RNA sequence: GGGAACGACUCGAGUAGAGUCGAAAAGAUAUGGAGCCUUGGGAAUCUUCAACAGCUCGGAAACGAGACAUGAAGUGGCCCGGAGGCUCCUAAGUCAAAGUGUCUCAUCCUUCGGGAUGAGACACAAGUAAAACACUAGGUUCGCCUAGUGUUUUACAAAAGAAACAACAACAACAAC
Reactivity to 2A3 in 0.01 (KOAc 150mM, MgCl2 10mM, bicine 150mM(pH8.5), 24C), signal-to-noise 3, nucleotides 027 to 126: g010a020u050a050u110g000g000a000g010c000c010u020u010g030g000g040a080a110u120c000u020u010c010a110a130c050a230g060c000u000c010g000g020a070a090a030c010g000a010g030a040c030a100u150g010a010a000g030u080g210g090c020c000c020g060g020a000g010g000c010u000c000c000u000a040a010g000u000c040a090a090a060g000u010g000u000c000u000c000a000u010c000c020u030u090c300g140g000g000a010u000g020a010g000a000c000a000c000a000a000
Reactivity to DMS in 0.01 (KOAc 150mM, MgCl2 10mM, bicine 150mM(pH8.5), 24C), signal-to-noise 5, nucleotides 027 to 126: g010a050u010a300u010g000g010a010g020c000c010u000u010g010g000g000a150a070u010c010u000u000c000a040a100c230a160g000c000u000c000g000g010a090a100a220c000g000a010g000a040c060a190u010g000a020a010g000u000g000g010c020c000c000g010g020a010g000g000c010u000c000c000u000a010a060g010u000c040a090a100a160g020u000g000u000c000u000c000a000u000c000c000u000u010c240g030g000g000a010u000g010a010g000a000c000a000c000a010a070